[RMDB]
RNA sequence: GGGAACGACUCGAGUAGAGUCGAAAAGAAAGAAGGAAAGUUCAUUGUUUAUCGGAAACUUUAAACUAUAACCAUUCAAACUUUUCCAGAAGUUAGUUUGAAUAGAAAUUAAAAAGAAACUUCUGAAUGACCUUGGCACCGUUCGCGGUGCCAAGAAGUAGCAGAUAUAGUUCGCUAUAUCUGCUACAAAAGAAACAACAACAACAAC
Reactivity to 2A3 in 0.01 (KOAc 150mM, MgCl2 10mM, bicine 150mM(pH8.5), 24C), signal-to-noise 2, nucleotides 027 to 156: g060a010a030a000g050a060a060g030g020a190a080a010g000u040u060c060a050u050u060g050u070u150u130a110u110c080g030g030a110a050a030c010u020u030u040a070a050a000c030u020a020u060a210a040c020c010a020u010u010c000a000a000a000c000u020u020u000u030c100c010a000g000a010a000g000u000u020a000g000u000u000u000g030a020a020u100a130g060a000a020a010u180u230a040a060a010a000a000g020a010a000a000c000u010u010c000u000g020a010a030u070g010a000c010c010u010u000g010g010c000a000c010c000g000u050u060c080g030c020g070g000u000g000c000c000a000a000g000a000a000

The record gives the reactivity of an RNA of 207 nucleotides to 2A3.
It was measured as part of the RMDB library M2RFOK.
The reactions ran in a buffer of 150 mM KOAc, 10 mM MgCl2 and 150 mM bicine (pH 8.5), at 24 C.